[RMDB]
RNA sequence: GGGAACGACUCGAGUAGAGUCGAAAACGGUUGCAGUCACGGGAACGACGGUGCGACCGUGAUCGACCGCCACGAAACGCGCUCCGAGGACCUGGGCAAAGUCCGCGUUGUAGGGCUCGGCACCGAAAAGAUUGCUUACAUUCGUGUAAGCAAUCUUAAAAGAAACAACAACAACAAC
Reactivity to DMS in 0.01 (KOAc 150mM, MgCl2 10mM, bicine 150mM(pH8.5), 24C), signal-to-noise 5, nucleotides 027 to 126: c020g010g000u000u000g010c140a090g000u020c020a090c030g040g000g000a160a130c080g000a110c090g010g000u020g010c020g000a050c010c000g030u000g000a090u010c030g010a020c020c020g010c040c040a110c080g000a070a080a070c120g010c060g010c030u000c040c040g000a140g000g010a080c050c050u010g020g010g020c060a050a090a040g000u000c040c020g010c080g000u010u000g000u010a160g000g010g000c000u000c150g010g010c030a050c000c000g020a140a110
Reactivity to 2A3 in 0.01 (KOAc 150mM, MgCl2 10mM, bicine 150mM(pH8.5), 24C), signal-to-noise 6, nucleotides 027 to 126: c010g000g010u010u030g010c050a050g050u040c010a020c110g090g050g140a210a060c080g100a030c020g070g180u090g010c010g000a010c000c000g000u000g010a020u030c000g010a010c010c000g050c020c030a150c060g070a070a090a030c070g010c010g000c030u040c030c030g000a060g030g020a030c020c030u050g000g020g000c050a080a040a010g010u020c020c010g020c030g020u010u050g070u070a030g020g000g000c000u020c020g040g000c040a100c050c020g040a070a100

This 177-nucleotide RNA was probed chemically with DMS and 2A3. The reactions ran in a buffer of 150 mM KOAc, 10 mM MgCl2 and 150 mM bicine (pH 8.5), at 24 C. Source: RMDB library OK1LIB, as collected in RNAgym.